[RMDB]
Structure probing data (DMS and 2A3) for a 177-nucleotide construct. For 2A3 the reverse transcriptase was SuperScript II with manganese.

RNA sequence: GGGAACGACUCGAGUAGAGUCGAAAAGAAUUUCCACUCUGUUGGAAUUAAAAUUUCCUGUAUUGAACGAGAGUAGAAGCACACAAUUUUCUUGAAGAAAAAGUAGUUAGUCUUCCAUAAUGUUCAAGACUGGGAUGAUAUUCGUAUCAUCCCAGUCAAAAGAAACAACAACAACAAC
Reactivity to DMS in 0.01 (KOAc 150mM, MgCl2 10mM, bicine 150mM(pH8.5), 24C), signal-to-noise 1, nucleotides 027 to 126: g040a030a050u000u010u000c010c010a050c070u060c200u020g010u030u000g000g020a000a010u010u010a000a030a050a150u000u010u000c000c000u060g000u000a190u000u020g000a000a000c000g000a130g000a160g020u000a050g000a000a000g010c020a160c050a090c020a050a090u000u000u000u000c000u000u020g000a140a100g000a010a000a010a020a050g000u000a100g010u000u030a040g020u040c000u000u020c050c010a090u030a050a150u010g010u010u020c000a020a040
Reactivity to 2A3 in 0.01 (KOAc 150mM, MgCl2 10mM, bicine 150mM(pH8.5), 24C), signal-to-noise 6, nucleotides 027 to 126: g050a030a070u060u020u000c020c000a030c030u300c200u220g170u230u040g020g030a010a010u050u110a070a120a070a120u040u030u000c020c020u050g080u110a140u020u040g000a000a000c030g020a050g000a010g190u140a030g020a020a010g020c040a000c010a000c020a140a130u000u020u050u020c040u080u180g170a290a210g030a030a030a000a010a020g050u150a030g010u030u070a040g010u060c000u000u000c000c010a060u070a280a050u260g000u010u000c020a020a010
The DMS profile rests on 2,161 reads.